[RMDB]
Chemical mapping of a 207-nucleotide RNA with DMS and 2A3. The reactions ran in a buffer of 150 mM KOAc, 10 mM MgCl2 and 150 mM bicine (pH 8.5), at 24 C.
RNA sequence: GGGAACGACUCGAGUAGAGUCGAAAAACAUGCCUUUGCCCGGCUCCACGACAUCCAGUCGGCCGUUCAGGCUGUCUUUCAUCACGUUCGAGUUAAUCAUCAGCACCGGAACGUCGCCGCGUGCAAUGGCCUUCUUGUCUUUCUGGUUGGAGUCCGGAUAGUAUGCUGUUUUCGAACAGCAUACUAUAAAAGAAACAACAACAACAAC
Reactivity to DMS in 0.01 (KOAc 150mM, MgCl2 10mM, bicine 150mM(pH8.5), 24C), signal-to-noise 3, nucleotides 027 to 156: a060c070a060u000g020c000c020u000u000u010g000c070c020c000g030g010c040u000c010c030a070c030g000a110c050a250u000c080c070a140g000u010c070g040g030c030c020g010u000u000c080a120g030g010c020u000g000u000c060u010u010u010c100a140u000c060a060c040g000u000u000c060g010a120g020u000u000a060a130u010c110a140u000c080a120g000c070a090c040c000g020g000a030a060c040g010u000c090g030c050c030g010c090g000u010g000c090a040a030u010g020g020c010c030u010u000c050u000u000g000u000c030u010u000u000c060u000g020g020u010u010g000g010a110g000u000c010c010g020g010
Reactivity to 2A3 in 0.01 (KOAc 150mM, MgCl2 10mM, bicine 150mM(pH8.5), 24C), signal-to-noise 6, nucleotides 027 to 156: a000c040a070u120g020c010c000u090u080u110g010c010c010c010g010g010c010u010c030c050a040c020g080a020c010a090u040c050c020a050g020u030c000g010g000c000c010g020u040u050c030a030g020g020c020u010g040u030c040u030u220u100c080a130u080c020a020c090g070u140u060c040g060a040g120u070u210a130a100u130c070a040u040c060a050g070c060a040c030c030g140g020a030a020c030g050u040c050g030c020c010g050c060g070u080g000c030a010a020u020g000g000c000c000u050u030c000u020u050g040u030c000u010u180u020c070u100g110g030u080u050g030g000a030g060u030c030c020g010g000

Background:
The 2A3 profile rests on 4,408 reads.